[RMDB]
About this RNA: The record gives the reactivity of an RNA of 177 nucleotides to DMS. The data come from the RNA Mapping Database (RMDB), library OK2TRN. For DMS, 536 sequencing reads were counted. The reactions ran in a buffer of 150 mM KOAc, 10 mM MgCl2 and 150 mM bicine (pH 8.5), at 24 C. For DMS the reverse transcriptase was MarathonRT.
RNA sequence: GGGAACGACUCGAGUAGAGUCGAAAACGCGGGCCAAAGCUGGUCGGUCACUGCCACCGGCCCCACCGAGGUCAAGGUUCCCGGCGUCCUGACCGCACGGAUCGUCCCGGGCGCGACCGCACUCGACUAUAGGAGCCUUUUUCGAAAGGCUCCUAUAAAAAGAAACAACAACAACAAC
Reactivity to DMS in 0.01 (KOAc 150mM, MgCl2 10mM, bicine 150mM(pH8.5), 24C), signal-to-noise 1, nucleotides 027 to 126: c080g030c070g010g000g040c010c000a120a190a120g000c100u010g020g010u000c020g000g000u010c090a080c210u000g030c100c100a070c090c070g000g010c010c000c060c110a230c070c000g000a180g000g000u000c070a100a140g010g000u000u010c030c000c000g020g010c030g000u000c010c030u000g000a100c160c040g000c230a170c030g020g030a100u000c120g000u020c070c000c020g000g010g000c300g020c070g000a060c020c000g000c230a090c110u010c050g020a120c220